[RMDB]
RNA sequence: GGGAACGACUCGAGUAGAGUCGAAAAGUUUACGCUCCAAGAUCGGUGGAUAGCAGCCCUAUCAAUAUCUAGGAGAACUGUGCUAUGUUUAGAAGAUUAGGUAGUCUCUAAACAGAACGAUUUACCUCAUACGUUAGGACGUUCGCGUCCUAACGAAUCGUGGUAAGAACUUCGGUUCUUACCACGAAAAAGAAACAACAACAACAAC
Reactivity to 2A3 in 0.01 (KOAc 150mM, MgCl2 10mM, bicine 150mM(pH8.5), 24C), signal-to-noise 4, nucleotides 027 to 156: g010u040u070u100a080c090g010c010u020c000c010a010a030g040a040u070c100g120g170u130g130g050a020u030a030g080c080a030g030c040c000c000u030a040u040c030a060a070u080a040u170c020u020a020g020g010a040g010a080a080c060u070g010u030g060c030u040a030u080g040u000u000u000a060g000a230a010g000a060u070u010a040g050g070u060a010g010u010c000u000c000u020a000a000a000c010a040g020a040a020c100g070a030u120u000u070a050c000c000u040c060a090u110a200c030g000u000u000a000g000g000a000c000g010u010u040c160g010c000g060u020c000c000u000a000a000c000g000a010a010
Reactivity to DMS in 0.01 (KOAc 150mM, MgCl2 10mM, bicine 150mM(pH8.5), 24C), signal-to-noise 1, nucleotides 027 to 156: g000u000u030u000a140c120g020c000u020c040c000a030a300g030a020u000c010g000g060u000g010g000a100u000a020g000c000a140g020c110c160c000u000a100u000c020a090a180u000a150u000c030u020a110g000g010a240g020a120a130c030u000g030u000g010c030u000a130u020g000u000u000u000a020g000a110a150g000a030u000u000a100g020g030u020a100g030u000c040u000c020u000a000a010a030c050a050g000a060a080c010g010a080u000u000u000a090c000c050u000c050a120u020a210c020g090u000u000a000g000g030a030c010g050u000u000c300g060c010g000u000c010c030u000a000a010c000g020a050a040